[RMDB]
RNA sequence: GGGAACGACUCGAGUAGAGUCGAAAAGAUAUGGAACGCAUUGAUCACGCGAGUCGGAAACGACUCGAACUACGUGAAUGAACUACGUUCCUAAGUCAAACAUCCGCACAGUUCGCUGUGCGGAUGAGCCUAAUCAUAUCUUCGGAUAUGAUUAGGCAAAAGAAACAACAACAACAAC
Reactivity to 2A3 in 0.01 (KOAc 150mM, MgCl2 10mM, bicine 150mM(pH8.5), 24C), signal-to-noise 8, nucleotides 027 to 126: g010a010u040a020u080g010g000a010a000c010g010c070a050u050u210g160a160u300c020a010c000g030c010g000a000g010u000c010g020g000a050a020a020c000g010a000c000u000c000g000a020a030c080u200a050c040g020u020g090a090a100u090g020a050a070c120u150a070c300g010u000u010c000c000u010a060a010g020u010c030a130a050a060c010a020u000c000c000g050c000a000c000a000g020u170u160c230g090c220u000g000u000g000c000g000g000a000u000g000a010
Reactivity to DMS in 0.01 (KOAc 150mM, MgCl2 10mM, bicine 150mM(pH8.5), 24C), signal-to-noise 6, nucleotides 027 to 126: g010a050u000a300u010g000g000a000a020c010g020c090a120u000u010g000a140u010c000a000c000g010c000g000a010g010u000c000g000g000a100a110a230c010g000a020c000u000c000g010a030a070c140u010a300c010g010u000g010a040a080u000g010a150a080c140u010a080c010g000u000u000c000c000u000a040a130g000u010c030a120a120a300c020a000u000c010c000g000c010a010c000a020g010u010u010c270g030c000u010g000u000g010c000g000g000a000u000g010a070
An RNA of 177 nucleotides, treated with 2A3 and DMS and read out base by base. Conditions: 150 mM KOAc, 10 mM MgCl2 and 150 mM bicine (pH 8.5), 24 C. For DMS the reverse transcriptase was MarathonRT. Values cover nucleotides 27 to 126. The DMS profile rests on 9,343 reads.